[RMDB]
RNA sequence: GGGAACGACUCGAGUAGAGUCGAAAACAAGAGAAAAAUCCAUAUGUAUGUGCUUAACCGGCUUACCCACCUUUCUCACGAAAUGAGGGUAGUUUUUGUAGCACAGUGAUGUAGACACUCGUGAGAAACCGUAGGAGCACGUAUACGAUGUAUGUAAGUAAAAUGAUAUGUUCGCAUAUCAUUUUACAAAAGAAACAACAACAACAAC
Reactivity to DMS in 0.01 (KOAc 150mM, MgCl2 10mM, bicine 150mM(pH8.5), 24C), signal-to-noise 4, nucleotides 027 to 156: c060a140a150g020a180g000a020a070a090a060a140u000c080c020a110u000a120u010g020u000a050u000g020u010g000c010u000u000a190a100c160c080g010g010c010u000u000a090c050c010c020a150c050c050u000u010u010c020u010c070a100c090g010a040a080a170u000g010a110g020g030g030u000a080g010u000u000u000u000u000g020u010a130g020c060a070c030a110g040u000g010a200u010g010u000a110g020a140c020a040c040u000c060g020u000g020a070g010a060a040a050c050c050g020u000a120g010g010a080g020c010a010c020g020u000a030u000a070c060g020a130u000g030u000a050u000g020u000a050a300
Reactivity to 2A3 in 0.01 (KOAc 150mM, MgCl2 10mM, bicine 150mM(pH8.5), 24C), signal-to-noise 7, nucleotides 027 to 156: c030a030a040g100a010g070a080a070a030a030a040u080c070c010a030u060a030u090g020u000a010u010g000u000g000c000u040u050a060a060c050c010g040g000c060u060u070a050c010c020c010a080c030c000u020u030u000c060u010c020a030c060g030a040a040a050u150g010a130g010g020g010u010a030g010u020u040u030u120u240g160u090a030g040c010a000c010a030g030u040g040a140u150g060u210a040g060a070c010a000c020u020c080g010u010g000a040g080a080a040a010c040c010g030u030a050g020g260a010g000c000a000c010g000u000a000u010a010c130g020a010u050g040u070a030u080g080u070a060a120